Chemical mapping of a 177-nucleotide RNA with 2A3 and DMS.
It was measured as part of the RMDB library TTRINS.
The 2A3 profile rests on 2,992 reads.
Conditions: 150 mM KOAc, 10 mM MgCl2 and 150 mM bicine (pH 8.5), 24 C.
For 2A3 the reverse transcriptase was SuperScript II with manganese.
RNA sequence: GGGAACGACUCGAGUAGAGUCGAAAAGAUAUGGAUGUAAGGGAGAAUUACUGUCCGACGAUCUUGCUAGUCGGAAACGACUAGCAAGGGAGGACAGACUAAUUCAUCGAUCUUACAUCCUAAGUCAGAAAGUAAAAUCGUUCGCGAUUUUACUUUCAAAAGAAACAACAACAACAAC
Reactivity to 2A3 in 0.01 (KOAc 150mM, MgCl2 10mM, bicine 150mM(pH8.5), 24C), signal-to-noise 1, nucleotides 027 to 126: g000a000u010a000u050g000g000a020u010g000u010a000a020g030g080g000a180g050a090a030u110u040a100c020u020g000u020c020c010g110a300c000g000a150u020c000u000u030g000c000u020a010g020u020c000g000g080a000a000a000c000g000a010c020u000a010g000c020a000a000g000g000g000a010g000g000a010c000a000g000a000c020u030a010a110u130u130c160a190u300c230g000a010u010c000u000u030a000c000a000u000c000c000u000a000a000g000u010c010a030
Reactivity to DMS in 0.01 (KOAc 150mM, MgCl2 10mM, bicine 150mM(pH8.5), 24C), signal-to-noise 1, nucleotides 027 to 126: g010a010u000a080u020g000g010a000u000g000u000a010a010g000g000g020a300g010a050a020u000u000a020c000u000g000u000c000c010g020a080c300g010a020u000c000u000u020g000c020u000a010g020u000c000g000g020a010a010a000c000g010a010c000u010a000g000c000a010a010g000g010g000a020g010g010a030c000a000g000a030c270u000a020a010u000u000c120a230u010c160g000a300u020c030u000u000a000c010a020u000c020c000u000a000a020g000u000c000a140